[RMDB]
Chemical mapping of a 177-nucleotide RNA with DMS and 2A3. The 2A3 profile rests on 2,599 reads. Values cover nucleotides 27 to 126. The RNA was probed in 150 mM KOAc, 10 mM MgCl2 and 150 mM bicine (pH 8.5) at 24 C. The data come from the RNA Mapping Database (RMDB), library OK2TST. For 2A3 the reverse transcriptase was SuperScript II with manganese.
RNA sequence: GGGAACGACUCGAGUAGAGUCGAAAAAAGGCCCAUUAAGCCCAUGGUUAGAUACUCUGCCCGCACAGCUCAGCGCCUGGCAGCGCGAAUCGUUACACGGUAAAUUUAAAACCUGGUUUAACGCCGAGAUACGGCAAAAUUUCGAUUUUGCCGUAUCAAAAGAAACAACAACAACAAC
Reactivity to DMS in 0.01 (KOAc 150mM, MgCl2 10mM, bicine 150mM(pH8.5), 24C), signal-to-noise 4, nucleotides 027 to 126: a100a090g010g000c010c000c060a150u000u000a100a100g010c030c020c070a110u000g010g010u000u000a100g010a130u000a050c090u000c040u000g000c020c010c060g010c080a060c050a070g020c060u000c060a100g010c050g010c040c060u010g010g010c100a100g020c060g000c040g000a080a060u010c060g020u010u000a070c090a110c120g010g000u000a050a060a130u000u010u000a070a050a070a060c030c020u000g010g010u000u010u010a060a070c080g000c160c040g000a160
Reactivity to 2A3 in 0.01 (KOAc 150mM, MgCl2 10mM, bicine 150mM(pH8.5), 24C), signal-to-noise 2, nucleotides 027 to 126: a000a000g080g020c010c000c000a030u090u070a050a010g020c020c000c030a030u060g020g050u040u110a040g020a070u100a080c030u050c020u080g020c000c000c000g030c010a020c060a060g010c010u020c070a020g010c020g020c050c000u010g050g000c010a020g000c010g020c000g040a020a050u110c030g020u060u080a020c020a000c040g040g000u070a110a140a140u160u240u180a110a120a010a010c010c010u020g030g000u000u070u000a040a010c020g010c010c020g040a040